[RMDB]
RNA sequence: GGGAACGACUCGAGUAGAGUCGAAAAGAUAUGGAAUGAUCCACGAACUACGACAACGUUCGGAAACGAACGACGUCGCGUGGAGUCAUUCCUAAGUCAAAGUUUCCUGACUUCGGUCAGGAAACAAGGACAUGGCAUAGUUCGCUAUGCCAUGUCCAAAAGAAACAACAACAACAAC
Reactivity to 2A3 in 0.01 (KOAc 150mM, MgCl2 10mM, bicine 150mM(pH8.5), 24C), signal-to-noise 2, nucleotides 027 to 126: g020a030u080a030u140g000g010a000a000u010g010a000u020c000c000a020c000g070a160a160c210u300a060c220g020a010c030a240a040c020g000u030u000c000g000g000a120a060a020c030g020a010a000c000g050a040c120g000u020c000g000c030g050u040g000g000a040g060u110c000a000u000u020c010c000u000a090a020g040u010c070a250a010a090g000u000u020u040c000c000u000g000a010c000u050u130c300g060g020u000c000a010g030g000a000a000a000c000a000a040
Reactivity to DMS in 0.01 (KOAc 150mM, MgCl2 10mM, bicine 150mM(pH8.5), 24C), signal-to-noise 1, nucleotides 027 to 126: g000a020u000a300u000g030g030a080a020u000g000a080u000c050c000a000c020g000a180a060c120u020a300c080g050a010c000a110a300c000g040u000u010c000g010g000a030a060a110c000g000a000a000c000g010a160c300g010u000c000g000c000g030u000g010g000a000g030u000c000a000u000u000c000c000u000a020a130g020u000c060a080a070a160g010u000u000u000c000c000u010g000a000c000u000u000c210g060g020u000c030a040g010g000a010a000a000c020a040a090
This 177-nucleotide RNA was probed chemically with 2A3 and DMS. The RNA was probed in 150 mM KOAc, 10 mM MgCl2 and 150 mM bicine (pH 8.5) at 24 C. The 2A3 profile rests on 2,840 reads. It was measured as part of the RMDB library TTRDES. High 2A3 reactivity points to a flexible backbone, as in loops and unpaired stretches.